Chemical mapping of a 177-nucleotide RNA with DMS and 2A3. It was measured as part of the RMDB library RFMREP. The DMS profile rests on 747 reads. High DMS reactivity at an A or C suggests that its Watson-Crick edge is free. The RNA was probed in 150 mM KOAc, 10 mM MgCl2 and 150 mM bicine (pH 8.5) at 24 C. The 2A3 profile rests on 772 reads.
RNA sequence: GGGAACGACUCGAGUAGAGUCGAAAACGUCAAUGAUGUCCUAAUCUACGAUUUAAUUCGAAUUGCUGUGAGAUAAUCUGAUGCAAAACAACUGAGACUAAAACCAAAAGGCUUCGGCCUUUUGGAACAAAGAAAGGACGUUCGCGUCCUUUCUUUGAAAAGAAACAACAACAACAAC
Reactivity to DMS in 0.01 (KOAc 150mM, MgCl2 10mM, bicine 150mM(pH8.5), 24C), signal-to-noise 1, nucleotides 027 to 126: c080g000u020c010a020a160u010g000a090u000g010u010c010c020u060a120a130u000c090u020a080c060g010a040u000u000u040a130a180u000u010c030g000a190a240u000u000g000c050u000g030u010g000a100g000a090u000a060a030u020c040u000g000a070u000g050c040a040a060a070a080c100a110a060c100u010g040a280g000a020c070u030a020a160a100a090c000c000a030a000a000a000g010g010c000u000u000c280g050g000c000c000u000u000u000u000g030g000a050a090
Reactivity to 2A3 in 0.01 (KOAc 150mM, MgCl2 10mM, bicine 150mM(pH8.5), 24C), signal-to-noise 2, nucleotides 027 to 126: c030g000u010c040a090a110u110g030a060u070g050u030c010c040u040a080a060u000c060u140a070c010g000a010u020u080u260a300a300u120u080c040g050a060a150u070u010g010c070u050g000u020g110a120g050a110u050a090a070u060c010u010g060a050u050g030c000a010a060a120a050c020a090a050c040u110g020a010g060a050c020u120a070a000a100a210c000c000a000a000a000a000g010g000c020u020u080c190g110g030c010c000u010u000u000u000g000g000a000a020